[RMDB]
Conditions: 150 mM KOAc, 10 mM MgCl2 and 150 mM bicine (pH 8.5), 24 C. Chemical mapping of a 177-nucleotide RNA with 2A3 and DMS. It was measured as part of the RMDB library OK1LIB. DMS adducts were read by reverse transcription with MarathonRT.
RNA sequence: GGGAACGACUCGAGUAGAGUCGAAAACGUAAUCGCCGUGCAGUUCUUCAUUUAUGGGUUCCAGUUGCACCCGAACAACAAUACGCGUCAGCCUACCGCUUAGCAUAUCGUAGAAAGGGUGACGAUCUAAAUAGUCGUGCUUCGGCACGACUAUUUAAAAAGAAACAACAACAACAAC
Reactivity to 2A3 in 0.01 (KOAc 150mM, MgCl2 10mM, bicine 150mM(pH8.5), 24C), signal-to-noise 3, nucleotides 027 to 126: c160g090u070a080a000u150c030g010c000c000g040u070g010c000a040g000u100u090c020u120u010c000a210u110u130u200a130u130g130g020g000u060u000c030c020a020g030u100u030g020c010a050c000c000c010g070a030a000c010a020a010c020a080a130u150a110c050g000c000g040u030c020a040g030c020c030u080a100c060c050g000c110u030u120a030g000c010a010u040a030u140c050g050u090a020g120a240a100a010g020g050g020u000g000a010c000g000a020u050c010
Reactivity to DMS in 0.01 (KOAc 150mM, MgCl2 10mM, bicine 150mM(pH8.5), 24C), signal-to-noise 3, nucleotides 027 to 126: c050g000u080a140a100u020c060g030c000c030g010u000g010c080a020g000u010u010c020u000u000c030a100u010u010u020a060u030g000g010g000u000u020c030c030a020g030u020u010g000c130a040c000c000c020g000a050a150c080a070a040c120a100a040u000a060c130g000c010g030u020c120a050g030c020c050u010a070c200c130g000c020u000u030a120g000c080a050u020a030u000c030g010u000a100g040a060a160a110g030g000g010u010g010a120c070g000a070u060c080